[RMDB]
RNA sequence: GGGAACGACUCGAGUAGAGUCGAAAAGUGGAUUUGUUCGCAAAUCCACAAAUCCCAACAAGCCUGGCUGGCAGCGUAACAACCGAGCUACGCGGCGUAGCAAAAGGUUACACUUCGGUGUAACCAAGAAACUAGGGUAGUUCGCUACCCUAGUUUCAAAAGAAACAACAACAACAAC
Reactivity to DMS in 0.01 (KOAc 150mM, MgCl2 10mM, bicine 150mM(pH8.5), 24C), signal-to-noise 2, nucleotides 027 to 126: g000u000g000g020a000u010u000u000g000u010u010c150g020c010a000a000a000u010c000c010a000c000a010a080a150u000c000c010c000a110a110c300a080a100g020c090c100u010g010g000c020u000g000g000c010a020g000c030g000u000a040a060c040a130a090c240c140g000a090g020c010u000a010c030g000c040g020g000c010g020u010a030g010c020a070a100a090a080g000g000u000u000a000c000a000c030u000u000c200g000g010u000g010u000a000a000c000c000a060a060
Reactivity to 2A3 in 0.01 (KOAc 150mM, MgCl2 10mM, bicine 150mM(pH8.5), 24C), signal-to-noise 2, nucleotides 027 to 126: g010u000g000g010a000u010u000u010g020u010u020c050g030c110a000a010a000u020c010c000a000c000a000a000a000u000c000c000c000a010a010c030a010a000g100c010c070u140g080g020c010u020g050g000c010a010g030c010g050u050a020a030c030a040a050c050c110g070a060g030c020u020a000c010g020c000g090g030c090g050u040a010g000c020a010a010a050a110g000g000u010u010a000c000a000c010u040u090c180g050g000u000g000u010a000a000c000c000a000a020